[RMDB]
RNA sequence: GGGAACGACUCGAGUAGAGUCGAAAAGGGGACGGGAGGAGCCCGGAGACGGGUCCCCUCUGGAACCUCCCGCACCGCCCGCGGAGGCCCCCGGCAGGCCGCCGAAAGGCGGGGGUAAAAACCAGCCUUAAGCAUUAUGAUUCGUCAUAAUGCUUAAAAAAGAAACAACAACAACAAC
Reactivity to 2A3 in 0.01 (KOAc 150mM, MgCl2 10mM, bicine 150mM(pH8.5), 24C), signal-to-noise 2, nucleotides 027 to 126: g000g000g020g020a020c030g010g000g000a000g010g010a040g100c020c000c000g050g020a010g000a020c050g010g030g080u050c030c020c010c000u010c020u020g020g030a020a040c000c000u010c010c000c000g010c020a050c000c000g040c000c010c020g010c010g020g020a020g010g000c000c000c010c030c020g020g010c040a010g020g010c000c010g000c000c010g060a090a010a000g020g020c030g000g020g000g020g020u100a030a070a020a020a050c010c020a020g040c010c010
Reactivity to DMS in 0.01 (KOAc 150mM, MgCl2 10mM, bicine 150mM(pH8.5), 24C), signal-to-noise 3, nucleotides 027 to 126: g000g010g000g020a250c050g000g000g000a010g020g000a300g020c300c000c010g000g000a150g000a170c090g020g040g000u000c020c020c090c020u000c010u000g000g010a300a150c000c000u010c010c000c020g010c150a060c000c010g010c030c020c040g010c060g020g000a030g030g000c020c000c080c040c080g000g010c070a170g020g000c000c010g040c000c010g000a070a120a090g000g000c000g000g000g030g030g000u020a060a100a080a170a100c010c020a110g010c040c010